Structure probing data (DMS) for a 177-nucleotide construct.

[RMDB]
RNA sequence: GGGAACGACUCGAGUAGAGUCGAAAACGAAAGUCUGACGGAGCAACGCCGCGUGAGUGAAGAAGGUUUUCGGAUCGUAAAACUCUGUUGUUAGGGAAGAACAAGUUAGGUAGUAACUGACCUGACCAGAAACCCUACUUUUCGAAGUAGGGUUUCUAAAAGAAACAACAACAACAAC
Reactivity to DMS in 0.01 (KOAc 150mM, MgCl2 10mM, bicine 150mM(pH8.5), 24C), signal-to-noise 2, nucleotides 027 to 126: c070g030a110a060a010g000u000c030u000g040a260c020g000g030a130g000c040a050a120c110g000c070c050g000c120g010u010g000a060g010u000g010a120a080g010a090a130g000g030u020u000u000u000c100g040g030a050u010c030g010u020a020a060a300a050c020u010c060u000g050u000u010g020u000u000a100g030g000g060a060a060g010a080a060c120a040a050g030u020u000a010g010g050u000a050g010u000a080a100c220u050g000a000c010c000u010g000a050c000c170
The data come from the RNA Mapping Database (RMDB), library OK2TRN.